[RMDB]
RNA sequence: GGGAACGACUCGAGUAGAGUCGAAAAGUUGUUCACAGAUGAAGCAGCUGUCCUUCAUCGCACGACGGCUAACUCGUGCUGUGAACAAGUCACGUGAGUCGAUCACUUAGCCGUGUGAUCGGUCAGAGGACAGCUGAGCUCUGACACUCACGUGUCGCACUAAUAAUCCAUUCGUGGAUUAUUAGUGAAAAGAAACAACAACAACAAC
Reactivity to 2A3 in 0.01 (KOAc 150mM, MgCl2 10mM, bicine 150mM(pH8.5), 24C), signal-to-noise 8, nucleotides 027 to 156: g070u040u020g000u000u010c010a000c010a030g020a040u030g030a070a010g010c070a010g020c020u060g030u070c020c000u090u160c080a240u140c070g040c050a030c050g050a010c020g020g040c030u040a070a030c030u010c020g050u170g090c000u010g000u000g000a010a010c010a010a010g020u020c000a000c010g000u010g010a010g030u080c050g040a030u000c000a010c010u030u090a070g080c060c060g080u060g000u000g030a020u040c010g000g020u020c000a000g000a010g060g060a120c050a080g070c120u180g060a030g020c000u010c000u020g010a000c000a010c030u000c000a000c000g000u000g010u010c030g010
Reactivity to DMS in 0.01 (KOAc 150mM, MgCl2 10mM, bicine 150mM(pH8.5), 24C), signal-to-noise 3, nucleotides 027 to 156: g010u000u010g020u000u000c030a030c010a100g000a090u000g020a060a060g020c090a060g030c010u010g000u000c050c050u000u010c060a110u010c150g000c070a060c060g000a040c020g030g040c050u000a090a050c050u000c010g030u000g010c000u000g000u000g000a030a040c020a030a070g010u010c010a020c000g020u000g000a020g020u010c020g010a090u000c020a030c000u000u000a120g020c100c120g010u000g030u000g010a020u000c020g030g020u000c030a070g020a080g030g010a080c060a160g020c080u000g010a070g020c020u000c030u000g000a130c070a180c010u010c010a000c020g020u000g000u000c020g010